[RMDB]
RNA sequence: GGGAACGACUCGAGUAGAGUCGAAAAGGUUUAAUGGGGACCUAAUCUAAGGGCAAGUUACAGAAUCGGAAGUUCAGGCCAAUUCAGUGCCAGCAUUCGAAAUACUAAAGAUGGUCCGUACUACCAAAAAUAUUUAUUUAUUCGUAAAUAAAUAUUUAAAAGAAACAACAACAACAAC
Reactivity to 2A3 in 0.01 (KOAc 150mM, MgCl2 10mM, bicine 150mM(pH8.5), 24C), signal-to-noise 2, nucleotides 027 to 126: g000g020u030u090u100a090a030u200g040g000g030g010a020c010c000u010a040a030u040c050u020a050a070g080g010g000c100a010a040g040u190u120a090c030a070g150a070a040u060c000g000g010a050a000g000u070u140c150a040g050g000c020c010a040a030u190u260c120a110g030u030g220c000c000a000g000c000a020u010u010c010g020a060a030a120u160a070c040u030a040a070a040g020a000u020g000g010u000c000c010g030u010a020c030u040a020c000c000a000a000
Reactivity to DMS in 0.01 (KOAc 150mM, MgCl2 10mM, bicine 150mM(pH8.5), 24C), signal-to-noise 2, nucleotides 027 to 126: g020g000u010u020u010a060a100u020g020g000g000g030a020c010c030u000a140a070u000c010u000a050a190g020g000g010c090a090a200g000u020u050a090c220a130g010a120a130u010c020g020g000a020a070g000u010u010c150a090g010g000c010c020a090a140u060u050c170a080g020u020g010c010c010a050g010c030a050u010u000c020g000a040a070a060u000a100c060u010a060a100a040g000a040u000g000g000u000c000c000g010u010a020c080u000a160c030c010a020a080